The record gives the reactivity of an RNA of 177 nucleotides to 2A3 and DMS. DMS adducts were read by reverse transcription with MarathonRT. Reactivities are given for positions 27 through 126.
[RMDB]
RNA sequence: GGGAACGACUCGAGUAGAGUCGAAAAAUUUGAUCACUUCUAUAGGGACUCACGCGGAAAUCGUCGUAAACGUGUCGCUUCAGCGGAGCGGGAGCAUCCCUGCUAACGAGGAGACCAACUUUAUCGCCAUUCCCUGUCCGUUCGCGGACAGGGAAUGAAAAGAAACAACAACAACAAC
Reactivity to 2A3 in 0.01 (KOAc 150mM, MgCl2 10mM, bicine 150mM(pH8.5), 24C), signal-to-noise 2, nucleotides 027 to 126: a000u120u050u060g020a050u060c000a000c050u020u000c040u110a100u180a070g000g030g010a010c020u000c010a030c000g040c020g070g070a100a110a050u060c030g100u060c080g110u230a080a190a040c020g020u000g060u050c030g080c060u250u230c080a020g000c020g000g010a010g040c000g020g000g010a010g000c040a030u080c000c000c020u000g000c020u030a050a020c100g000a000g040g000a040g000a010c000c010a000a040c030u070u070u080a160u120c070g030c150
Reactivity to DMS in 0.01 (KOAc 150mM, MgCl2 10mM, bicine 150mM(pH8.5), 24C), signal-to-noise 2, nucleotides 027 to 126: a060u000u010u000g010a040u000c020a080c010u000u020c010u010a130u000a020g020g000g020a050c020u000c000a070c010g040c020g030g000a090a220a100u000c030g030u000c120g000u000a070a070a070c010g020u000g000u010c000g020c010u010u020c140a160g000c020g030g000a300g010c010g010g010g000a020g020c140a140u000c010c000c000u000g000c200u010a050a090c200g000a020g000g000a120g000a020c000c000a030a050c180u000u000u000a090u030c100g030c170
Overview
The data come from the RNA Mapping Database (RMDB), library OK2TRN. 2A3 adducts were read by reverse transcription with SuperScript II with manganese.